Structure probing data (2A3 and DMS) for a 177-nucleotide construct. The 2A3 profile rests on 1,444 reads. The reactions ran in a buffer of 150 mM KOAc, 10 mM MgCl2 and 150 mM bicine (pH 8.5), at 24 C. DMS adducts were read by reverse transcription with MarathonRT.
RNA sequence: GGGAACGACUCGAGUAGAGUCGAAAAUGAGCUUGCCCGACGCUUCUGCACGCCGGAUAACUGCCUUGUGGUGGUACUAUGCAACAACCGAUUUCUGUUCCGCCUGGAACGUGCACCCGGUAGCCACGGAUGUUGUACGCUUCGGCGUACAACAUCCAAAAGAAACAACAACAACAAC
Reactivity to 2A3 in 0.01 (KOAc 150mM, MgCl2 10mM, bicine 150mM(pH8.5), 24C), signal-to-noise 1, nucleotides 027 to 126: u140g010a000g020c050u060u070g020c010c010c000g010a000c070g000c000u060u000c000u060g000c050a040c060g000c010c020g000g000a020u050a110a040c060u060g000c030c020u080u100g120u110g060g010u000g020g000u000a030c020u050a040u120g010c030a070a040c000a020a040c060c010g050a050u030u070u080c020u090g090u050u010c010c000g030c070c050u130g060g000a020a000c010g020u060g020c000a010c010c000c000g000g000u040a010g050c040c010a070c050
Reactivity to DMS in 0.01 (KOAc 150mM, MgCl2 10mM, bicine 150mM(pH8.5), 24C), signal-to-noise 2, nucleotides 027 to 126: u000g020a060g000c030u000u000g010c060c000c020g010a090c100g000c070u000u000c050u000g030c070a090c060g010c020c000g000g000a080u010a080a020c040u000g000c020c010u000u000g030u010g010g060u000g010g000u000a090c120u000a070u020g010c100a010a100c140a120a120c040c000g000a160u000u000u000c070u000g030u010u000c020c000g010c100c110u010g020g000a040a020c080g040u000g020c200a100c150c040c050g010g000u000a110g000c030c090a050c110